Structure probing data (DMS and 2A3) for a 207-nucleotide construct. Source: RMDB library M2RFPK, as collected in RNAgym. Conditions: 150 mM KOAc, 10 mM MgCl2 and 150 mM bicine (pH 8.5), 24 C. For 2A3 the reverse transcriptase was SuperScript II with manganese. The 2A3 profile rests on 1,341 reads.

RNA sequence: GGGAACGACUCGAGUAGAGUCGAAAAUAAUUGAUCUGUAGAAUCUGUCAAGCAAAACCCCAAAACCUUACACUGAGAGCAUUUAGCGUGAUUACUCUUUAAAUCAAAUCAGGCAAUAGAGAGAAACAAAAUCCGUGACUGUUCGCAGUCACGGAAACUAUGGUGAAAUGUUCGCAUUUCACCAUAGAAAAGAAACAACAACAACAAC
Reactivity to DMS in 0.01 (KOAc 150mM, MgCl2 10mM, bicine 150mM(pH8.5), 24C), signal-to-noise 1, nucleotides 027 to 156: u000a130a080u040u010g010a050u000c050u000g000u000a140g020a190a170u030c060u000g000u000c010a050a080g010c030a000a050a080a100c020c000c010c050a070a120a130a070c070c040u000u010a040c060a110c100u010g010a020g020a100g040c030a190u000u000u000a040g000c070g030u000g000a060u000u010a070c060u000c050u000u000u000a050a050a160u000c050a010a070a120u000c090a020g000g050c010a040a130u000a060g000a090g000a100g000a150a070a130c040a120a040a050a060u000c000c000g020u000g000a020c000u010g000u010u010c210g060c010a020g000u000c000a000c000g000g000a000a000a050
Reactivity to 2A3 in 0.01 (KOAc 150mM, MgCl2 10mM, bicine 150mM(pH8.5), 24C), signal-to-noise 3, nucleotides 027 to 156: u060a010a080u040u030g050a040u040c110u070g090u110a090g100a200a060u080c020u050g060u050c030a050a010g000c040a050a070a130a200c030c020c020c050a050a030a060a130c070c030u080u070a040c060a050c090u120g100a010g000a000g010c020a040u060u060u090a050g010c070g030u010g020a020u030u070a020c000u020c020u090u150u080a060a070a030u100c100a030a020a030u020c010a020g100g000c030a090a000u230a020g050a020g010a030g050a130a070a020c060a040a120a010a050u000c000c000g000u000g000a000c010u010g040u070u050c180g000c060a010g000u000c000a000c000g000g000a000a000a000